Chemical mapping of a 177-nucleotide RNA with DMS and 2A3. DMS (dimethyl sulfate) methylates the pairing face of unpaired adenines and cytosines. DMS adducts were read by reverse transcription with MarathonRT. Reactivities are given for positions 27 through 126. It was measured as part of the RMDB library OK2TST.
RNA sequence: GGGAACGACUCGAGUAGAGUCGAAAAGCCACCAGCAGGUUGCCAUGGGCGUGGCCCGGCGCGUGGUAGCGGUAGGCGGACAGCGGAUAGCCGUCGGUCGCGGGCAGGGCCAGGCGUUCCAUCCGCACGGUGGAUUACUAUUCGUAGUAAUCCACCGAAAAGAAACAACAACAACAAC
Reactivity to DMS in 0.01 (KOAc 150mM, MgCl2 10mM, bicine 150mM(pH8.5), 24C), signal-to-noise 3, nucleotides 027 to 126: g030c020c030a050c070c050a160g030c120a090g020g000u000u010g010c030c050a110u010g010g010g020c040g020u000g010g000c010c000c000g010g030c010g010c110g030u020g010g020u000a120g010c010g020g000u000a080g000g010c010g020g000a110c110a120g010c020g000g000a070u010a160g000c080c000g030u000c010g000g020u000c000g010c000g010g010g020c020a070g020g000g000c000c010a050g020g010c010g000u000u000c020c030a040u000c020c030g030c030a270
Reactivity to 2A3 in 0.01 (KOAc 150mM, MgCl2 10mM, bicine 150mM(pH8.5), 24C), signal-to-noise 1, nucleotides 027 to 126: g010c000c020a000c000c000a030g180c040a060g020g150u120u090g010c020c030a080u130g090g060g020c070g060u020g000g040c010c000c010g060g020c220g010c040g110u170g090g070u130a020g010c000g030g010u060a050g020g000c010g010g020a040c050a050g020c010g010g000a040u030a040g080c000c000g020u030c050g010g020u040c020g000c010g060g100g020c020a040g020g000g020c020c000a010g050g000c020g030u090u040c010c000a050u010c000c000g040c030a010